[RMDB]
RNA sequence: GGGAACGACUCGAGUAGAGUCGAAAAGUCGGGUGAGAAUCCCGACCGCCGGAAGGGCAAGGGUUCCACGGCAAUGUUCGUCAGCCGUGGGUGAGUCGGUCCUAAGGUGGCCCGUAACUCGGCGCCGGGUCUCCUCCUGAUUCGUCAGGAGGAGACCAAAAGAAACAACAACAACAAC
Reactivity to 2A3 in 0.01 (KOAc 150mM, MgCl2 10mM, bicine 150mM(pH8.5), 24C), signal-to-noise 3, nucleotides 027 to 126: g000u000c000g000g000g000u000g020a040g000a030a030u030c000c000c000g000a000c000c010g000c000c000g040g020a170a080g010g010g000c050a020a120g130g000g000u100u150c000c010a010c000g000g000c030a070a160u040g010u100u140c130g150u120c090a170g190c130c010g020u030g000g020g030u100g000a010g070u050c030g000g010u000c000c000u000a050a060g070g020u090g050g000c000c000c020g020u090a060a030c030u010c070g000g000c000g000c020c020g030

An RNA of 177 nucleotides, treated with 2A3 and read out base by base. The reactions ran in a buffer of 150 mM KOAc, 10 mM MgCl2 and 150 mM bicine (pH 8.5), at 24 C. It was measured as part of the RMDB library RFM100.